[RMDB]
RNA sequence: GGGAACGACUCGAGUAGAGUCGAAAAUACUUAGUACGCGCGUAGUUGCAGGCAUUCCGGGUGCAGCAACUGACGCGGAAGACUUUUCCCAGAGAGUGCGCUUCAACUGGCGUGCUGAGUAGUGCACGAAUUGCACGUACGUUCGCGUACGUGCAAACCUUAUCUUGAAAUUCGUUUCAAGAUAAGGAAAAGAAACAACAACAACAAC
Reactivity to 2A3 in 0.01 (KOAc 150mM, MgCl2 10mM, bicine 150mM(pH8.5), 24C), signal-to-noise 7, nucleotides 027 to 156: u070a010c000u010u020a000g000u010a000c000g000c000g000c000g040u020a000g010u000u010g000c030a130g100g000c020a030u110u100c110c180g220g050g020u010g020c010a010g000c000a020a020c010u080g150a040c000g000c010g000g000a010a000g080a040c030u200u130u060u040c010c000c010a010g010a000g000a000g010u010g000c030g000c020u040u070c070a300a300c130u040g020g010c000g010u010g000c000u000g000a000g000u040a010g010u010g010c010a000c030g040a060a070u050u020g000c010a000c000g000u000a000c000g010u020u050c170g000c000g080u000a000c010g000u000g000c000a000a000a010
Reactivity to DMS in 0.01 (KOAc 150mM, MgCl2 10mM, bicine 150mM(pH8.5), 24C), signal-to-noise 4, nucleotides 027 to 156: u000a050c060u000u010a050g020u000a080c010g000c010g040c020g000u000a040g030u000u010g020c010a170g020g000c010a040u010u000c010c300g010g040g160u000g000c000a300g020c020a020a020c020u000g010a030c020g010c010g000g010a070a110g010a160c130u010u000u000u000c000c000c010a210g010a160g010a090g030u000g000c030g010c000u000u000c050a100a130c100u010g010g040c010g020u000g010c010u000g000a080g030u000a040g030u000g000c040a080c040g010a100a190u000u000g010c010a010c000g000u000a010c010g040u000u010c300g000c020g040u000a030c000g000u000g010c010a010a010a060
Notes: Chemical mapping of a 207-nucleotide RNA with 2A3 and DMS. For 2A3 the reverse transcriptase was SuperScript II with manganese. The data come from the RNA Mapping Database (RMDB), library M2RFOK. For DMS, 10,844 sequencing reads were counted. Conditions: 150 mM KOAc, 10 mM MgCl2 and 150 mM bicine (pH 8.5), 24 C.